[RMDB]
RNA sequence: GGGAACGACUCGAGUAGAGUCGAAAACUGCGGGUCUGGGAUUUACCGAGCAGCAGGUCCCCCUGCACUUGGCUGAUGGCGGUGGACAGCGUGAUAUCCCGGGCGGUGAACUCACCGGAGCCGUCAGCACCUGGUCGUCCUUCGGGACGACCAGGUGAAAAGAAACAACAACAACAAC
Reactivity to 2A3 in 0.01 (KOAc 150mM, MgCl2 10mM, bicine 150mM(pH8.5), 24C), signal-to-noise 1, nucleotides 027 to 126: c040u060g000c010g040g000g120u020c010u140g000g030g050a130u110u150u140a100c040c000g000a070g010c040a000g000c030a020g110g120u140c020c000c000c060c000u000g020c010a020c080u210u270g100g010c050u010g020a090u070g000g010c030g030g000u120g000g040a010c000a040g010c060g060u090g050a060u030a090u200c010c000c000g020g040g000c050g020g020u050g040a040a050c040u050c280a180c000c040g120g010a010g000c000c000g000u050c000a000g010